[RMDB]
RNA sequence: GGGAACGACUCGAGUAGAGUCGAAAAACGAGUCGUACGCGACUCGAAUGGUAUUGUCGGUGUAAAAGAACAAGACGUCACCGGACGCGACCGGGCUAAAAAGCGAAACGUCAUCUACGGAUGACGAAAAACGGACCUGGGUUCGCCCAGGUCCGAAGAAUAGUCUGGUCUUCGGACCAGACUAUUCAAAAGAAACAACAACAACAAC
Reactivity to 2A3 in 0.01 (KOAc 150mM, MgCl2 10mM, bicine 150mM(pH8.5), 24C), signal-to-noise 1, nucleotides 027 to 156: a000c000g000a000g000u000c010g010u060a020c200g010c020g110a000c010u000c000g010a020a080u100g080g000u080a050u110u210g070u080c120g030g010u040g020u140a100a180a060a070g080a110a050c100a160a020g050a010c070g020u050c010a000c070c020g000g000a030c000g020c020g010a010c020c040g010g000g000c030u020a010a010a010a010a010g000c000g030a090a020a040c040g010u000c010a000u000c000u010a010c210g140g000a000u000g000a000c000g000a140a030a000a000a000c000g000g010a000c000c000u010g000g010g030u030u100c150g080c020c000c000a010g000g000u000c000c000g010a000a010
Structure probing data (2A3) for a 207-nucleotide construct. For 2A3 the reverse transcriptase was SuperScript II with manganese. Source: RMDB library M2RFPK, as collected in RNAgym.